[RMDB]
RNA sequence: GGGAACGACUCGAGUAGAGUCGAAAAGAAUGGAAAGGGAUUGUAGAGAUCAGUGUCGAGGCCGGGCUUCUCAGCAUUCUCAAUUAGAUUGUAUAUGGUUACGUGCGACAGAUACUGGUGCGAAGAAGGGUUAUAUAUUCUUCGGAAUAUAUAACCCAAAAGAAACAACAACAACAAC
Reactivity to 2A3 in 0.01 (KOAc 150mM, MgCl2 10mM, bicine 150mM(pH8.5), 24C), signal-to-noise 6, nucleotides 027 to 126: g050a020a050u110g000g020a060a030a070g050g010g030a040u060u080g090u130a040g040a000g010a070u050c040a010g020u010g010u010c010g010a040g010g030c020c020g000g020g000c000u080u020c050u020c030a020g000c010a030u100u020c020u010c020a050a280u160u140a060g070a100u020u050g040u040a060u030a020u190g080g010u040u030a050c030g040u110g050c020g010a040c020a030g030a030u040a050c020u020g020g010u060g050c070g010a030a010g070a060a070
Reactivity to DMS in 0.01 (KOAc 150mM, MgCl2 10mM, bicine 150mM(pH8.5), 24C), signal-to-noise 6, nucleotides 027 to 126: g000a080a040u010g010g010a040a070a070g010g000g000a140u010u010g010u010a080g000a150g010a050u010c060a030g020u000g010u000c020g000a190g000g000c000c020g020g000g000c030u000u010c120u010c140a110g010c030a040u010u000c060u010c270a120a140u050u030a060g010a080u000u000g000u000a060u030a100u020g000g010u000u010a090c050g020u040g020c030g010a040c080a170g000a040u010a030c040u000g010g000u000g020c080g000a070a100g010a120a150

Chemical mapping of a 177-nucleotide RNA with 2A3 and DMS. Reactivities are given for positions 27 through 126. Source: RMDB library OK1LIB, as collected in RNAgym. The RNA was probed in 150 mM KOAc, 10 mM MgCl2 and 150 mM bicine (pH 8.5) at 24 C. For 2A3 the reverse transcriptase was SuperScript II with manganese. The DMS profile rests on 12,482 reads.